[RMDB]
RNA sequence: GGGAACGACUCGAGUAGAGUCGAAAAGGGGUCUUCCUCUCAGUACUCCCAUUGUCAGCUCUGCCAGCUGAAGCCUCCACGGCUGUGGUCAGAGCUUGGAUUUAUGGGAGGAACCGAGGAAGACGGAGGCACCCAAACUUCCGGUUCGCCGGAAGAACUAUUAGGAUUUCUUCGGAAAUCCUAAUAGAAAAGAAACAACAACAACAAC
Reactivity to 2A3 in 0.01 (KOAc 150mM, MgCl2 10mM, bicine 150mM(pH8.5), 24C), signal-to-noise 2, nucleotides 027 to 156: g040g000g010g020u000c000u040u000c000c000u030c000u010c000a000g000u000a000c000u010c000c000c000a020u020u030g030u030c030a000g010c010u010c000u010g000c010c000a020g030c080u120g070a070a030g010c000c030u190c180c040a050c080g000g000c000u010g060u060g080g080u280c030a010g000a000g000c000u010u060g000g000a000u060u180u280a020u010g000g020g010a010g010g000a000a000c000c000g000a000g000g000a000a000g000a000c000g010g000a000g010g040c050a070c000c000c000a060a120a010c010u010u020c000c000g000g090u050u070c250g030c050c000g000g010a000a000g000a000a010
Reactivity to DMS in 0.01 (KOAc 150mM, MgCl2 10mM, bicine 150mM(pH8.5), 24C), signal-to-noise 1, nucleotides 027 to 156: g000g030g030g040u000c030u000u000c000c030u010c030u000c040a130g010u000a300c010u000c000c020c010a060u010u050g000u000c000a060g010c010u000c000u000g010c030c030a100g020c030u030g010a060a120g020c000c000u010c080c090a300c120g030g040c030u020g030u000g040g020u000c030a030g020a050g000c010u020u010g000g000a080u000u000u000a020u000g010g010g000a050g020g000a070a060c180c300g010a070g050g010a030a030g000a000c000g000g010a040g060g010c100a090c000c000c010a070a110a170c000u010u000c000c000g040g010u010u010c300g070c020c000g030g020a010a010g010a060a240
Structure probing data (2A3 and DMS) for a 207-nucleotide construct. The DMS profile rests on 2,482 reads. High 2A3 reactivity points to a flexible backbone, as in loops and unpaired stretches. Conditions: 150 mM KOAc, 10 mM MgCl2 and 150 mM bicine (pH 8.5), 24 C. For 2A3, 2,103 sequencing reads were counted. The data come from the RNA Mapping Database (RMDB), library RNAMAK. 2A3 adducts were read by reverse transcription with SuperScript II with manganese.